[RMDB]
RNA sequence: GGGAACGACUCGAGUAGAGUCGAAAAGUGAUUGGCGGCUCGAAGCCUUUUACCCUGCAGCCAAUGUGAGCGGAUUCUAGCAGGGUUUUAUAGAUCGUCAACACUAUAAAACAUUGAAAUCAUAACACGUGAAAAAUUUGUUCGCAAAUUUUUCACGAAAAGAAACAACAACAACAAC
Reactivity to DMS in 0.01 (KOAc 150mM, MgCl2 10mM, bicine 150mM(pH8.5), 24C), signal-to-noise 1, nucleotides 027 to 126: g000u010g000a140u000u000g000g020c010g000g020c080u050c180g030a030a070g030c060c120u000u000u000u050a060c010c000c000u030g000c000a110g000c010c010a160a130u000g000u010g010a130g140c100g000g000a130u020u000c050u020a030g010c060a030g000g030g000u000u000u010u010a020u050a040g000a050u000c000g000u040c020a000a130c020a010c000u000a120u050a020a010a070a060c230a080u030u000g000a140a080a050u020c060a040u000a120a020c200a110
Reactivity to 2A3 in 0.01 (KOAc 150mM, MgCl2 10mM, bicine 150mM(pH8.5), 24C), signal-to-noise 2, nucleotides 027 to 126: g030u000g000a300u040u050g000g000c000g000g000c030u050c070g040a090a050g000c060c000u010u030u000u010a010c000c020c000u000g010c000a040g000c000c000a040a200u190g020u110g150a170g070c110g080g020a110u280u000c010u100a010g000c000a000g040g020g010u000u000u000u000a000u010a020g010a020u020c020g000u010c000a000a000c000a000c000u000a050u040a240a090a010a040c050a030u130u240g060a070a110a060u170c010a000u040a180a050c050a000
Conditions: 150 mM KOAc, 10 mM MgCl2 and 150 mM bicine (pH 8.5), 24 C. An RNA of 177 nucleotides, treated with DMS and 2A3 and read out base by base. DMS adducts were read by reverse transcription with MarathonRT.